[RMDB]
RNA sequence: GGGAACGACUCGAGUAGAGUCGAAAAGAUAUGGAUCCUGGGAGAAGUAGCUCGGAAACGAGCUACCUUCAUCGAUCAUGGAUCCUAAGUCAAAAGCCCGUGCUUAUGUUCGCAUAAGCACGGGCAAGCUAAAGAGCAUGUUCGCAUGCUCUUUAGCAAAAGAAACAACAACAACAAC
Reactivity to 2A3 in 0.01 (KOAc 150mM, MgCl2 10mM, bicine 150mM(pH8.5), 24C), signal-to-noise 2, nucleotides 027 to 126: g030a020u050a060u070g000g000a000u010c010c000u050g030g070g000a100g000a010a020g010u010a000g000c010u000c010g000g030a050a090a030c010g020a000g010c000u000a010c020c010u040u080c040a280u150c010g050a030u080c050a110u300g000g000a000u030c010c000u020a060a000g040u050c040a000a080a140a170g020c010c000c000g030u000g000c000u030u000a020u060g000u070u110c300g020c150a000u000a010a000g010c000a010c000g030g000g000c000a000a000
Reactivity to DMS in 0.01 (KOAc 150mM, MgCl2 10mM, bicine 150mM(pH8.5), 24C), signal-to-noise 2, nucleotides 027 to 126: g000a040u000a300u000g000g000a000u000c000c010u010g000g010g000a180g000a030a070g000u010a000g020c000u000c000g000g010a060a040a180c030g010a020g000c010u000a010c100c080u000u000c080a170u010c160g000a140u010c030a010u000g010g020a010u010c000c000u000a010a100g000u010c040a130a110a180a160g010c010c000c000g030u000g000c000u000u000a010u010g000u000u020c230g020c010a010u000a010a010g000c000a000c000g010g000g000c000a000a000